[RMDB]
RNA sequence: GGGAACGACUCGAGUAGAGUCGAAAAACUUACUAGCUAUGAGAUCUUGGGCAGAUGGCUUAACAUUUCUGGGCCUCAGUGACCUUACUUGCAAAGUUGUCUGGGUCAAGGCAAUGAUUAAAUGCGAGACAUCUCUUUACUUCGGUAAAGAGAUGUCAAAAGAAACAACAACAACAAC
Reactivity to DMS in 0.01 (KOAc 150mM, MgCl2 10mM, bicine 150mM(pH8.5), 24C), signal-to-noise 3, nucleotides 027 to 126: a090c090u010u010a080c090u000a100g010c030u010a090u000g010a170g000a070u000c030u000u000g000g010g000c050a030g000a040u000g020g010c010u000u000a110a140c020a040u010u010u010c110u000g000g000g020c020c010u010c220a110g020u010g010a030c010c010u000u000a030c070u010u000g020c070a060a060a060g000u000u000g020u000c010u010g000g000g000u010c050a040a020g010g000c070a050a050u000g000a150u000u000a030a080a090u000g010c040g010a180
Reactivity to 2A3 in 0.01 (KOAc 150mM, MgCl2 10mM, bicine 150mM(pH8.5), 24C), signal-to-noise 2, nucleotides 027 to 126: a000c030u050u090a050c020u030a040g050c030u020a050u140g070a050g060a220u060c020u040u010g000g030g000c040a040g010a130u050g020g000c000u040u010a040a020c000a050u060u080u000c090u090g020g030g000c000c030u120c080a130g040u100g130a120c000c000u000u020a050c000u010u010g050c040a010a050a070g010u030u020g010u070c000u030g020g090g200u030c020a020a010g010g000c010a040a080u090g050a000u130u150a120a130a040u110g060c020g030a050